Structure probing data (2A3 and DMS) for a 177-nucleotide construct. Values cover nucleotides 27 to 126. It was measured as part of the RMDB library M2PK50. For 2A3 the reverse transcriptase was SuperScript II with manganese. For 2A3, 6,975 sequencing reads were counted.
RNA sequence: GGGAACGACUCGAGUAGAGUCGAAAAAACUACUUCUUCGGAAGUAGUUAUUGCGUGGGUCUAAUAAGCCCAAGGUGCCAGGUUCGACGCUUGCUGGGCGCAUCACCGACCGAUUCGUCGGUCGGAACUAUCGUACCUUUUUCGAAAGGUACGAUAGAAAAGAAACAACAACAACAAC
Reactivity to 2A3 in 0.01 (KOAc 150mM, MgCl2 10mM, bicine 150mM(pH8.5), 24C), signal-to-noise 4, nucleotides 027 to 126: a010a000c000u000a000c010u010u000c000u020u050c300g050g000a010a000g010u000a000g000u010u020a150u070u140g010c030g020u050g000g010g000u000c000u020a060a040u080a230a050g020c000c000c020a020a020g090g010u070g000c020c010a030g010g070u070u090c050g080a070c040g050c070u050u070g030c020u070g030g050g010c020g000c020a040u100c040a020c010c000g000a000c000c000g000a000u030u060c230g050u010c010g070g000u010c000g000g000a000a000
Reactivity to DMS in 0.01 (KOAc 150mM, MgCl2 10mM, bicine 150mM(pH8.5), 24C), signal-to-noise 5, nucleotides 027 to 126: a020a010c000u000a010c000u000u000c000u000u010c220g020g010a010a000g010u000a000g010u000u000a010u010u000g010c070g020u000g010g010g010u000c030u000a120a080u010a130a200g000c000c000c010a040a070g020g040u010g010c020c050a090g000g000u000u000c050g010a060c060g010c050u000u000g040c050u010g000g010g020c030g010c090a080u010c110a190c010c000g010a010c000c000g000a030u000u000c170g000u000c000g000g000u000c000g000g000a020a080